This 177-nucleotide RNA was probed chemically with 2A3 and DMS.
Source: RMDB libraries RFM100 and RFMREP, as collected in RNAgym.
The reactions ran in a buffer of 150 mM KOAc, 10 mM MgCl2 and 150 mM bicine (pH 8.5), at 24 C.

RNA sequence: GGGAACGACUCGAGUAGAGUCGAAAAGAAAGAAAGAAAGAUGCGAUGUGUGCAUUGCAUUGCGACGGGUUAUAUCACUAAUCGUAACAUGAUGUAACCCAACGCAGCAUGAUGUAAGCGUCGUGAAGACUAAUUGUUUUUUCGAAAACAAUUAGUCAAAAGAAACAACAACAACAAC
Reactivity to 2A3 in 0.01 (KOAc 150mM, MgCl2 10mM, bicine 150mM(pH8.5), 24C), signal-to-noise 9, nucleotides 027 to 126: g100a010a050a000g130a030a080a010g130a040a100a010g120a050u190g020c000g000a010u010g050u010g030u050g020c010a010u010u050g020c040a050u020u140g000c010g010a020c040g010g000g000u000u000a010u000a000u010c010a010c080u130a140a130u180c140g180u160a090a050c030a090u060g000a000u000g000u000a000a000c000c000c000a000a000c000g000c000a000g000c000a010u150g010a010u010g050u030a080a030g010c000g000u000c000g000u010g030a070a020
Reactivity to DMS in 0.01 (KOAc 150mM, MgCl2 10mM, bicine 150mM(pH8.5), 24C), signal-to-noise 9, nucleotides 027 to 126: g020a080a080a080g010a090a090a080g010a090a100a100g010a150u010g010c000g000a020u010g020u030g010u010g010c000a000u000u000g010c210a050u000u000g000c000g010a040c300g010g010g010u000u000a000u000a000u000c000a030c120u010a100a140u030c300g010u020a100a120c300a140u010g010a010u000g010u000a000a010c010c000c000a030a100c010g010c000a040g010c240a030u010g010a020u000g000u000a030a070g010c000g000u000c000g010u000g010a090a110